[RMDB]
RNA sequence: GGGAACGACUCGAGUAGAGUCGAAAAGGUAAUGAGUUCGCUCAUUACCAAAGAAAGCGAGCUAGUCUGAGCGCACAGACUAGCACGGCGCAAAGAAAGAAAAAAGAACCUGGUUCGCCAGGUUCAAGUAAGAAUCUAGGUUCGCCUAGAUUCUUACAAAAGAAACAACAACAACAAC
Reactivity to DMS in 0.01 (KOAc 150mM, MgCl2 10mM, bicine 150mM(pH8.5), 24C), signal-to-noise 4, nucleotides 027 to 126: g000g010u000a000a010u000g010a020g020u000u010c270g030c020u000c000a000u010u010a000c000c000a020a050a120g000a100a090a120g010c010g030a130g010c000u000a000g010u000c000u000g000a090g020c190g010c190a130c010a000g010a010c000u010a000g010c010a010c080g010g030c030g010c090a050a120a130g010a040a100a110g020a010a040a080a050a160a150g000a000a010c000c000u000g000g000u000u010c240g010c000c000a010g000g010u000u000c000a010a070
Reactivity to 2A3 in 0.01 (KOAc 150mM, MgCl2 10mM, bicine 150mM(pH8.5), 24C), signal-to-noise 3, nucleotides 027 to 126: g000g000u000a000a000u000g010a000g040u040u100c150g060c070u000c000a000u000u000a000c000c000a000a000a000g050a020a030a000g050c020g010a020g000c010u000a000g000u000c000u010g040a030g160c090g000c070a030c000a120g000a000c000u000a010g010c010a000c020g110g000c040g000c080a050a090a000g130a070a110a020g060a010a160a040a010a010a040g000a000a000c000c010u000g030g000u040u040c180g040c040c000a000g000g000u010u010c000a000a000

Source: RMDB library M2PK50, as collected in RNAgym. Chemical mapping of a 177-nucleotide RNA with DMS and 2A3. The reactions ran in a buffer of 150 mM KOAc, 10 mM MgCl2 and 150 mM bicine (pH 8.5), at 24 C. Reactivities are given for positions 27 through 126. For 2A3 the reverse transcriptase was SuperScript II with manganese.